[RMDB]
RNA sequence: GGGAACGACUCGAGUAGAGUCGAAAAGGAAAGCACAUGAAGCACGCGAAGCACGGCAAGCACAUGAAGCACUACAAGCAGUACAAGCAGCGCAAGCUGUAGAAGCAGCCGAAGCAGUACAAAAAAAGUAUAAGCCUCUGUUCGCAGAGGCUUAUACAAAAGAAACAACAACAACAAC
Reactivity to DMS in 0.01 (KOAc 150mM, MgCl2 10mM, bicine 150mM(pH8.5), 24C), signal-to-noise 2, nucleotides 027 to 126: g010g010a050a100a050g030c020a070c070a050u010g000a050a090g000c040a040c080g020c050g000a070a080g000c020a070c110g000g020c020a040a080g000c070a040c050a050u000g000a110a020g030c020a030c020u000a100c100a070a080g000c030a040g000u010a040c100a070a190g000c040a020g010c000g000c220a170a040g010c000u000g010u020a000g000a070a130g010c030a020g020c010c020g000a030a070g010c020a030g000u000a070c100a020a010a050a060a000a040a230